[RMDB]
RNA sequence: GGGAACGACUCGAGUAGAGUCGAAAAAUUCCUUGUCGGGUAAGUUCCGACCUGCACGAAAGGCGCAACGACUUGGGCGCUGUCUCAACCAUGGACCCGGUGAAAUUCCACUAGUCGUGAAGAUGCGCCAACCAAUGCAUUUCGAUGCAUUGGUUGGAAAAGAAACAACAACAACAAC
Reactivity to 2A3 in 0.01 (KOAc 150mM, MgCl2 10mM, bicine 150mM(pH8.5), 24C), signal-to-noise 3, nucleotides 027 to 126: a000u030u000c000c010u000u040g040u010c000g000g040g020u100a180a070g080u190u030c020c000g000a000c000c020u150g060c040a060c120g100a110a030a030g070g010c030g000c000a010a020c020g050a040c040u060u050g060g030g000c010g000c040u020g040u030c010u000c030a100a100c030c010a080u090g020g030a030c000c000c070g010g000u030g020a120a050a060u150u040c020c010a060c070u100a040g010u070c020g010u000g100a110a030g100a080u050g040c000g010
Reactivity to DMS in 0.01 (KOAc 150mM, MgCl2 10mM, bicine 150mM(pH8.5), 24C), signal-to-noise 4, nucleotides 027 to 126: a180u010u000c000c000u000u050g010u000c010g000g000g030u020a030a090g030u030u070c020c020g010a040c030c140u000g020c040a130c090g000a080a060a080g010g000c000g010c020a080a020c040g000a020c030u010u010g000g020g010c150g010c030u000g010u020c090u010c070a040a110c160c100a110u050g010g000a120c010c120c030g010g000u020g030a070a080a130u000u000c030c010a080c130u020a020g010u010c010g000u000g010a080a100g010a170u010g000c060g010
The data come from the RNA Mapping Database (RMDB), libraries RFM100 and RFMREP. Structure probing data (2A3 and DMS) for a 177-nucleotide construct. 2A3 is a SHAPE reagent: it acylates the 2'-hydroxyl of flexible nucleotides of all four kinds. 2A3 adducts were read by reverse transcription with SuperScript II with manganese.